[RMDB]
RNA sequence: GGGAACGACUCGAGUAGAGUCGAAAAGCGUGUCGGCCUGCUUCGGCAGGCACUGGCGCCGGGACCUUGAAGAGAUGAGAUUUCGAUCUCAUCUUUGGGUGUCUCUGGUGCUUGAGGGCCCUGUGUUCGCACAGGGCCGCUCACUGGGUGUGGACGUAGUUAGCUUAAGGUUCGCCUUAAGCUAACUAAAAGAAACAACAACAACAAC
Reactivity to 2A3 in 0.01 (KOAc 150mM, MgCl2 10mM, bicine 150mM(pH8.5), 24C), signal-to-noise 1, nucleotides 027 to 156: g070c080g010u110g040u130c070g130g010c000c010u000g000c010u070u120c150g080g020c010a010g010g010c010a010c010u020g030g000c000g010c000c000g000g000g000a020c020c050u050u100g170a070a020g050a020g000a040u090g000a030g020a010u090u130u230c290g090a010u000c000u030c000a000u030c000u000u000u010g040g000g000u180g040u010c030u000c110u180g020g000u000g020c000u040u110g000a000g000g000g030c000c000c050u000g000u000g010u010u080c210g040c110a000c000a000g000g000g000c010c000g000c000u020c000a030c040u080g000g060g070u110g000u030g040g000a010c050g020u000
An RNA of 207 nucleotides, treated with 2A3 and read out base by base. It was measured as part of the RMDB library PDB130. The 2A3 profile rests on 1,079 reads.